[RMDB]
RNA sequence: GGGAACGACUCGAGUAGAGUCGAAAAGGAGGAGGAGAAUUCCAGCGCGCGCUCGGUCCUCCCACGCGCGGCGCGCGCUGGAAUUCGCGCGCGGAGGAUGAUUAAUAGAUAGCGCGCCGCGUGCUUCGGCACGCGAAAAGAAACAACAACAACAAC
Reactivity to DMS in 0.01 (KOAc 150mM, MgCl2 10mM, bicine 150mM(pH8.5), 24C), signal-to-noise 1, nucleotides 027 to 135: g010g010a100g000g000a090g000g000a180g020a040a030u000u020c000c000a040g000c040g000c000g000c000g000c010u010c060g000g010u000c040c040u000c030c020c020a040c110g020c020g000c060g010g000c000g050c000g010c000g010c000u000g000g000a010a000u000u010c010g020c030g010c030g030c050g000g000a100g000g000a080u040g020a100u020u030a100a060u030a040g000a080u050a110g000c000g010c000g010c080c070g000c020g030u010g000c020u010u060c140g020g020c020a020c030g090c030g000a040